Chemical mapping of a 177-nucleotide RNA with DMS and 2A3. For 2A3, 2,816 sequencing reads were counted. For 2A3 the reverse transcriptase was SuperScript II with manganese. High 2A3 reactivity points to a flexible backbone, as in loops and unpaired stretches. The data come from the RNA Mapping Database (RMDB), library OK1LIB. For DMS the reverse transcriptase was MarathonRT. Conditions: 150 mM KOAc, 10 mM MgCl2 and 150 mM bicine (pH 8.5), 24 C.
RNA sequence: GGGAACGACUCGAGUAGAGUCGAAAAAAAUAAACAUAGCCCAUUUGUUUGCCACGUUUAUCUUCUUCAACACUGGAUAACAUAAUGACCCAAAUAGGACUAACUGCAAUACCGAGCAUCAUAGCACAGAAUACGUCCAAUUCGUUGGACGUAUUCUAAAAGAAACAACAACAACAAC
Reactivity to DMS in 0.01 (KOAc 150mM, MgCl2 10mM, bicine 150mM(pH8.5), 24C), signal-to-noise 2, nucleotides 027 to 126: a020a040a070u020a060a020a120c140a180u010a070g000c010c040c000a150u000u000u000g000u000u010u010g020c030c020a100c080g070u000u000u040a080u000c020u000u000c050u000u050c040a050a130c100a070c080u050g000g000a110u000a080a050c110a030u010a090a090u000g040a060c000c010c090a040a020a040u010a030g000g000a100c000u000a000a030c150u000g030c040a000a010u000a080c030c040g010a030g010c010a020u000c070a120u050a060g010c110a110c120
Reactivity to 2A3 in 0.01 (KOAc 150mM, MgCl2 10mM, bicine 150mM(pH8.5), 24C), signal-to-noise 4, nucleotides 027 to 126: a000a010a030u220a010a030a010c080a010u130a040g050c000c000c030a030u100u090u060g080u040u020u060g030c030c000a030c060g020u020u040u150a170u000c030u090u020c030u070u050c070a100a060c050a050c100u030g020g020a030u050a120a000c010a030u150a110a080u230g060a050c000c010c030a000a020a170u090a060g020g040a010c000u030a060a000c020u100g020c020a010a010u030a080c000c020g030a020g030c020a020u060c010a010u080a040g120c090a040c000